Chemical mapping of a 207-nucleotide RNA with 2A3 and DMS. The data come from the RNA Mapping Database (RMDB), library RNAMAK. The DMS profile rests on 3,854 reads. The reactions ran in a buffer of 150 mM KOAc, 10 mM MgCl2 and 150 mM bicine (pH 8.5), at 24 C. DMS adducts were read by reverse transcription with MarathonRT. 2A3 adducts were read by reverse transcription with SuperScript II with manganese.

RNA sequence: GGGAACGACUCGAGUAGAGUCGAAAAACCUUUGUGACGGUGGCAUAGGGAGAACCUCGACGGUCCCAUUGGGACCGUCACGCGAGGUUCGAGGAUCUAUGCGUAACAUCCGUCACUCUGGUAAAUCGCAUAGUAGGGUUCGCCCUACUAUGCGAAAGCUAAGUUAAUCGUUCGCGAUUAACUUAGCAAAAGAAACAACAACAACAAC
Reactivity to 2A3 in 0.01 (KOAc 150mM, MgCl2 10mM, bicine 150mM(pH8.5), 24C), signal-to-noise 4, nucleotides 027 to 156: a000c010c000u020u000u010g000u000g010a000c000g000g000u010g020g000c000a010u000a000g000g010g020a010g010a000a000c000c010u010c040g000a020c000g000g000u010c010c020c090a280u210u300g000g000g000a000c040c000g010u050c010a050c020g120c140g000a010g000g030u030u000c010g000a070g000g000a000u000c000u000a000u000g000c010g000u010a000a010c020a180u150c000c000g000u000c000a000c000u000c010u010g000g000u050a090a120a080u040c010g000c000a000u000a000g000u000a000g030g000g030u040u050c240g200c000c000c000u000a000c000u000a010u000g000c000g000a000a000a000
Reactivity to DMS in 0.01 (KOAc 150mM, MgCl2 10mM, bicine 150mM(pH8.5), 24C), signal-to-noise 1, nucleotides 027 to 156: a020c000c000u000u020u000g020u000g040a010c000g030g000u010g010g000c000a020u000a040g000g000g010a090g000a020a010c000c000u000c010g060a090c000g030g040u010c010c010c000a300u000u000g050g020g000a010c020c020g010u000c000a000c110g030c050g000a010g060g010u000u000c010g010a110g060g000a050u000c030u000a000u000g010c020g030u010a050a010c040a170u010c000c000g010u000c010a020c010u000c020u020g000g010u010a060a100a070u010c000g000c000a000u000a010g040u000a020g030g030g000u000u020c300g000c000c000c000u000a010c000u000a010u000g000c020g050a000a000a100